[RMDB]
RNA sequence: GGGAACGACUCGAGUAGAGUCGAAAAAUAGUGUUAUUCGUAACACUAUAUAUCCGAACUGAAGGAUUCGUUCCAGAGACAUGCAUGCUAGCAUGAAAGCAACUGAACAAGCGUUCGCGCUUGUUAAACAAAGAGGUUACUUCGGUAACCUCUUUGUAAAAGAAACAACAACAACAAC
Reactivity to 2A3 in 0.01 (KOAc 150mM, MgCl2 10mM, bicine 150mM(pH8.5), 24C), signal-to-noise 3, nucleotides 027 to 126: a000u010a000g000u010g000u010u010a020u040u070c160g020u030a010a000c000a000c000u000a000u000a010u000a000u000c050c030g000a070a030c020u070g040a090a030g170g010a060u020u010c010g000u020u000c000c000a040g010a020g020a180c000a020u030g030c010a000u180g180c060u120a050g000c020a000u070g030a090a020a000g100c030a050a100c090u240g070a010a000c030a000a000g000c000g030u070u140c230g000c020g010c110u010u000g000u000u060a060a060
Reactivity to DMS in 0.01 (KOAc 150mM, MgCl2 10mM, bicine 150mM(pH8.5), 24C), signal-to-noise 3, nucleotides 027 to 126: a020u000a000g010u010g000u010u000a030u010u010c180g010u000a010a010c000a000c000u000a010u000a030u010a100u000c130c020g020a050a060c060u000g010a140a240g010g010a010u000u000c010g010u000u000c000c000a120g000a210g020a190c030a000u000g010c010a120u000g030c200u020a100g000c000a020u000g020a090a090a120g000c080a050a090c130u000g010a040a010c010a010a010g020c010g030u010u010c220g020c000g020c000u010u000g010u000u000a040a070